[RMDB]
RNA sequence: GGGAACGACUCGAGUAGAGUCGAAAAGAAGAGAAAGGAGACACAUGGACAGUCUCCAGAGGUUCCUAAGGCCUCGAUCGCGCCUGCCGGGAAUCAUGGACCCCCGGUUGUCCAUGACAGAAGAAGACAUGAUCGGUCAUUUCGAUGACCGAUCAUGAAAAGAAACAACAACAACAAC
Reactivity to DMS in 0.01 (KOAc 150mM, MgCl2 10mM, bicine 150mM(pH8.5), 24C), signal-to-noise 2, nucleotides 027 to 126: g070a160a080g070a080g010a080a140a160g000g000a040g000a010c020a120c200a120u000g000g000a000c130a250g010u000c000u060c000c020a030g000a200g000g000u000u010c060c060u000a100a060g030g000c080c050u020c020g030a090u030c030g000c120g020c030c030u000g060c050c030g000g000g000a100a030u000c040a070u000g000g000a130c110c040c060c040c100g000g000u000u000g000u000c000c010a000u000g000a130c150a180g010a090a130g000a100a100g000a200
Reactivity to 2A3 in 0.01 (KOAc 150mM, MgCl2 10mM, bicine 150mM(pH8.5), 24C), signal-to-noise 1, nucleotides 027 to 126: g050a090a010g120a000g000a000a180a070g010g020a020g010a010c050a000c000a160u000g030g000a030c010a060g000u010c000u010c000c000a000g000a030g000g000u040u020c020c000u040a070a190g000g000c070c030u080c160g000a070u140c010g000c040g010c020c000u000g000c030c040g000g010g000a020a090u150c070a030u050g020g000a000c000c000c000c000c110g000g020u040u000g000u000c000c000a000u020g090a030c080a020g190a150a000g040a050a000g050a060
The record gives the reactivity of an RNA of 177 nucleotides to DMS and 2A3. 2A3 adducts were read by reverse transcription with SuperScript II with manganese. Values cover nucleotides 27 to 126.